Structure probing data (2A3 and DMS) for a 177-nucleotide construct. For 2A3 the reverse transcriptase was SuperScript II with manganese. The RNA was probed in 150 mM KOAc, 10 mM MgCl2 and 150 mM bicine (pH 8.5) at 24 C.
[RMDB]
RNA sequence: GGGAACGACUCGAGUAGAGUCGAAAAGAUGAGCAGGCAGAUAAUCUUGUGCAGUAUGCAUGCUCGUAACUCCAGCGCACAAGUGGAAGCACAAGAUUUCAAUCCAGCAUAGCGCAGGAGCCGCAGACGUAUCAGGAGUGUUCGCACUCCUGAUACGAAAAGAAACAACAACAACAAC
Reactivity to 2A3 in 0.01 (KOAc 150mM, MgCl2 10mM, bicine 150mM(pH8.5), 24C), signal-to-noise 5, nucleotides 027 to 126: g080a060u160g000a020g020c030a020g000g000c010a010g000a150u110a110a050u060c000u020u010g010u010g010c060a060g050u060a040u050g000c010a010u020g000c010u020c010g000u020a030a010c000u010c000c000a010g010c020g000c010a050c040a230a100g080u060g060g010a070a000g000c020a000c010a050a000g000a030u050u140u100c070a060a070u020c020c000a010g020c050a180u140a140g020c030g000c020a020g010g010a000g000c020c020g020c030a060g010a130
Reactivity to DMS in 0.01 (KOAc 150mM, MgCl2 10mM, bicine 150mM(pH8.5), 24C), signal-to-noise 3, nucleotides 027 to 126: g010a040u050g020a010g010c020a000g010g010c030a060g000a090u030a080a040u010c000u000u010g020u040g010c020a140g020u000a080u030g010c000a020u000g000c000u000c000g030u000a050a170c010u000c000c000a060g000c020g000c050a180c160a110a090g000u000g000g000a110a150g050c000a020c030a000a000g010a140u020u030u010c190a100a180u000c020c000a140g000c070a090u040a070g010c010g080c000a150g000g000a010g000c040c040g000c200a100g000a190
Reactivities are given for positions 27 through 126. The 2A3 profile rests on 6,372 reads. Source: RMDB library OK1LIB, as collected in RNAgym.